[RMDB]
RNA sequence: GGGAACGACUCGAGUAGAGUCGAAAACGGAAAAAGUUUCGACUUUUUCCGAAAAAUCCUAAGUCAGGUGGGACAUGCUCCCUGUCGGAAACGACAGUGAGCAACAGCCGUAACAUCCUGAUAUGGAAAAAAACCUCAGUAGUUCGCUACUGAGGAAGUACUACGUCACUUUCGAGUGACGUAGUACAAAAGAAACAACAACAACAAC
Reactivity to DMS in 0.01 (KOAc 150mM, MgCl2 10mM, bicine 150mM(pH8.5), 24C), signal-to-noise 1, nucleotides 027 to 156: c000g010g000a040a040a000a040a000g000u010u000u000c180g030a150c000u000u020u000u000u010c000c060g080a010a000a020a070a120u000c020c000u000a060a260g000u010c000a010g020g140u000g000g010g000a030c000a300u000g000c010u000c000c040c000u000g010u010c000g000g020a220a160a290c000g000a010c000a040g010u000g010a050g030c030a010a010c000a100g010c050c000g030u000a150a040c090a070u020c000c010u010g020a040u010a210u000g000g000a000a000a040a180a100a040a170c020c000u000c000a000g000u000a010g040u020u000c300g010c030u000a040c000u000g010a040g020g000a010a000
Reactivity to 2A3 in 0.01 (KOAc 150mM, MgCl2 10mM, bicine 150mM(pH8.5), 24C), signal-to-noise 3, nucleotides 027 to 156: c000g000g010a010a000a000a000a010g030u060u120u200c200g040a100c020u000u000u000u000u000c000c000g000a010a000a000a000a000u030c020c000u050a190a000g050u010c000a000g000g010u020g010g010g030a070c030a190u040g010c000u000c020c020c000u000g000u000c000g010g040a090a090a050c010g000a000c000a000g020u000g010a010g050c000a000a010c010a010g020c000c000g000u020a030a010c060a300u150c010c000u000g000a000u010a060u050g020g070a100a040a010a000a020a020a110c000c000u000c000a010g010u010a000g000u030u090c250g020c150u000a000c000u000g000a010g000g000a000a010
Structure probing data (DMS and 2A3) for a 207-nucleotide construct. The RNA was probed in 150 mM KOAc, 10 mM MgCl2 and 150 mM bicine (pH 8.5) at 24 C. DMS adducts were read by reverse transcription with MarathonRT.